[RMDB]
RNA sequence: GGGAACGACUCGAGUAGAGUCGAAAACGAGGAAGUUCGCUUCCUCGAAAAAGAUAUGGAGCUGUGAGGACUUUUGACGCUCGAGUAUUCGGAAACGAAUACGAGAGCGAUAAGUCCUACAGCUCCUAAGUCAAAAACUUACACUUCGGUGUAAGAAUACAAUGCUAUUCUUCGGAAUAGCAUUGUAAAAAGAAACAACAACAACAAC
Reactivity to 2A3 in 0.01 (KOAc 150mM, MgCl2 10mM, bicine 150mM(pH8.5), 24C), signal-to-noise 2, nucleotides 027 to 156: c030g010a000g010g010a000a000g010u060u150c190g070c100u000u010c000c000u010c010g000a010a000a000a000a000g040a020u080a030u110g000g000a010g000c030u020g030u120g260a060g010g000a020c010u040u050u120u220g150a120c080g000c000u000c010g000a020g010u000a000u010u000c000g000g040a020a070a060c020g010a010a000u000a000c010g010a000g000a000g010c000g000a000u000a000a000g000u000c000c000u000a000c000a000g010c000u000c000c000u000a000a000g000u000c000a010a000a000a100a180c010u010u000a000c020a010c000u110u120c300g110g000u000g000u000a000a000g000a000a000
Reactivity to DMS in 0.01 (KOAc 150mM, MgCl2 10mM, bicine 150mM(pH8.5), 24C), signal-to-noise 1, nucleotides 027 to 156: c020g030a000g000g010a060a000g000u000u000c300g000c010u000u000c000c000u000c000g000a000a080a050a140a070g000a140u050a200u000g010g010a000g030c000u000g000u010g010a080g000g030a010c000u000u000u020u000g000a290c130g030c010u000c000g050a300g010u000a010u000u010c020g010g000a200a210a300c040g010a040a000u010a000c030g000a300g000a020g040c000g050a030u000a020a000g000u020c000c010u000a010c030a030g020c030u000c000c000u000a000a030g000u050c050a080a060a040a130a130c050u000u000a000c000a000c000u000u000c300g060g030u020g020u000a000a000g000a120a140